[RMDB]
Structure probing data (2A3 and DMS) for a 170-nucleotide construct. Reactivities are given for positions 27 through 129. For 2A3 the reverse transcriptase was SuperScript II with manganese. Source: RMDB library 15KLIB, as collected in RNAgym.

RNA sequence: GGGAACGACUCGAGUAGAGUCGAAAAUAACCCAUACUAUGGGAACUGCUGGGUUCCUCGGAUGUCGAUCCCCUCUCCCGUUCGGGAAAAGGGGGACUCCGGAACUCCCUGCAGGUUGGGCACGAAGAUCCUCUAUGGUUCGCCAUAGAGAAAAGAAACAACAACAACAAC
Reactivity to 2A3 in 0.01 (KOAc 150mM, MgCl2 10mM, bicine 150mM(pH8.5), 24C), signal-to-noise 9, nucleotides 027 to 129: u100a020a050c010c010c010a030u130a100c160u150a110u160g010g000g040a060a040c000u010g020c030u050g010g000g000u020u040c000c010u010c030g010g010a070u220g010u040c030g080a190u150c020c000c000c000u010c010u010c010c000c010g130u290u290c160g010g000g000a000a040a030a030g000g000g000g010g010a010c000u000c010c000g010g000a010a000c030u100c020c000c000u010g000c010a000g000g000u020u070g040g010g000c080a020c110g060a070a010g020a050u040c010
Reactivity to DMS in 0.01 (KOAc 150mM, MgCl2 10mM, bicine 150mM(pH8.5), 24C), signal-to-noise 7, nucleotides 027 to 129: u070a120a120c020c010c010a040u070a080c250u020a080u050g000g030g000a070a180c070u000g030c000u010g030g020g040u020u000c050c000u040c040g030g010a060u060g000u000c000g030a170u080c000c000c020c040u000c120u000c000c000c040g000u070u070c180g000g020g000a030a020a100a060g050g000g020g020g010a040c030u030c010c000g000g000a000a000c100u020c020c020c020u020g020c040a020g010g040u020u020g030g030g060c120a000c030g040a050a090g020a080u000c050